An RNA of 177 nucleotides, treated with DMS and 2A3 and read out base by base. Values cover nucleotides 27 to 126. For 2A3 the reverse transcriptase was SuperScript II with manganese. As a SHAPE reagent, 2A3 marks flexible, mostly unpaired nucleotides at the ribose 2'-OH.
RNA sequence: GGGAACGACUCGAGUAGAGUCGAAAAUAAAACCGCGAAGAGAACCAAGCCUUGAGACACAAGGAGGGAUGUCUCAAGGCUAGGUUCUCGACUAGUGUCGAGUCGUUCCCAAUCCCUCCGCAAAAAAACUUUAAACCUAGUUCGCUAGGUUUAAAGUAAAAGAAACAACAACAACAAC
Reactivity to DMS in 0.01 (KOAc 150mM, MgCl2 10mM, bicine 150mM(pH8.5), 24C), signal-to-noise 2, nucleotides 027 to 126: u000a050a020a090a080c150c130g030c120g000a130a180g020a140g000a000a020c010c000a100a100g010c020c000u000u000g000a010g010a010c000a080c300a070a050g020g000a030g010g020g000a050u000g000u010c000u000c000a000a010g000g020c000u000a010g000g010u000u000c000u000c010g010a030c060u000a030g000u000g010u000c010g000a000g010u000c010g000u000u010c000c000c000a020a010u000c000c010c000u000c000c010g000c110a000a000a100a140a020a130
Reactivity to 2A3 in 0.01 (KOAc 150mM, MgCl2 10mM, bicine 150mM(pH8.5), 24C), signal-to-noise 1, nucleotides 027 to 126: u100a000a080a030a050c040c060g050c110g090a140a080g120a000g000a080a000c000c020a040a000g000c000c000u000u010g010a000g000a000c010a000c000a060a060g000g000a000g010g000g000a010u000g000u000c000u000c000a000a000g010g000c000u000a000g000g000u000u000c000u010c000g000a000c010u020a010g110u030g100u100c020g000a000g000u010c000g000u000u000c010c010c000a000a000u000c000c010c000u010c000c020g000c010a110a110a010a000a000a000